[RMDB]
RNA sequence: GGGAACGACUCGAGUAGAGUCGAAAAGCAUAAGCCGCGAGGCGACGUAUAGGGUCUGACGCCUGCCCGGUGCCGGAAGGUCACGCGGAGGUGUUAGCGCGAGCGAAGCACCGAAGCCAAGCCCCGGUACUCGUGUAUCAUUCGUGAUACACGAGUAAAAAGAAACAACAACAACAAC
Reactivity to 2A3 in 0.01 (KOAc 150mM, MgCl2 10mM, bicine 150mM(pH8.5), 24C), signal-to-noise 6, nucleotides 027 to 126: g050c020a060u080a160a050g020c010c010g030c060g020a040g010g020c020g030a020c040g120u140a090u200a210g120g020g010u040c080u090g040a050c030g020c010c010u080g050c030c020c020g020g020u030g000c000c000g040g020a140a080g030g000u090c040a000c060g010c000g010g030a040g000g000u020g090u160u010a010g000c010g000c020g010a030g000c010g000a010a000g000c000a000c000c000g010a020a000g000c010c000a030a020g000c000c000c000c000g000g000
Reactivity to DMS in 0.01 (KOAc 150mM, MgCl2 10mM, bicine 150mM(pH8.5), 24C), signal-to-noise 9, nucleotides 027 to 126: g020c090a090u020a170a160g020c000c010g010c210g000a130g010g010c010g010a080c140g000u010a070u030a090g000g010g000u020c040u010g010a120c090g000c020c010u030g000c030c020c010g000g020u010g010c000c010g020g000a140a050g010g010u000c080a180c300g020c010g010g000a300g000g000u000g010u000u000a300g010c000g000c260g000a180g010c000g000a140a130g000c010a010c000c000g010a300a200g000c010c080a110a190g000c010c000c000c010g000g000
Chemical mapping of a 177-nucleotide RNA with 2A3 and DMS. DMS adducts were read by reverse transcription with MarathonRT. The data come from the RNA Mapping Database (RMDB), libraries RFM100 and RFMREP.